[RMDB]
RNA sequence: GGGAACGACUCGAGUAGAGUCGAAAACGGCUGUCAUGCCAAGAUGCGAGUAUGUUACAAUUGUUAUGAGCAUGCAGACACAUACGAGGACUCCAGUGAUGAGGAGAAUGAUUCUACAAUGCAAUUGGAGUAUUCCACAAUUCGUUGUGGAAUACUCAAAAGAAACAACAACAACAAC
Reactivity to DMS in 0.01 (KOAc 150mM, MgCl2 10mM, bicine 150mM(pH8.5), 24C), signal-to-noise 4, nucleotides 027 to 126: c150g000g000c030u000g010u020c090a060u020g000c020c030a100a160g010a100u000g010c030g000a280g010u010a020u010g010u000u000a190c060a040a090u010u010g010u000u010a130u000g000a150g010c030a010u010g000c040a020g000a120c090a060c070a050u020a060c080g010a140g010g010a140c010u000c010c020a050g020u000g000a100u010g000a100g000g010a030g010a080a080u000g010a090u000u000c020u010a030c090a100a060u020g010c120a050a080u010u010g000
Reactivity to 2A3 in 0.01 (KOAc 150mM, MgCl2 10mM, bicine 150mM(pH8.5), 24C), signal-to-noise 5, nucleotides 027 to 126: c040g030g000c040u070g200u300c050a070u150g000c000c030a030a010g100a050u110g030c050g010a030g040u090a060u120g070u100u100a130c020a160a140u070u090g120u200u130a130u190g040a010g000c010a000u050g000c000a000g040a050c020a010c000a070u130a070c040g030a030g040g040a010c000u000c020c010a030g040u050g110a130u060g050a020g050g020a020g030a060a100u110g060a040u060u010c010u040a060c020a080a110u110g030c000a000a140u040u080g040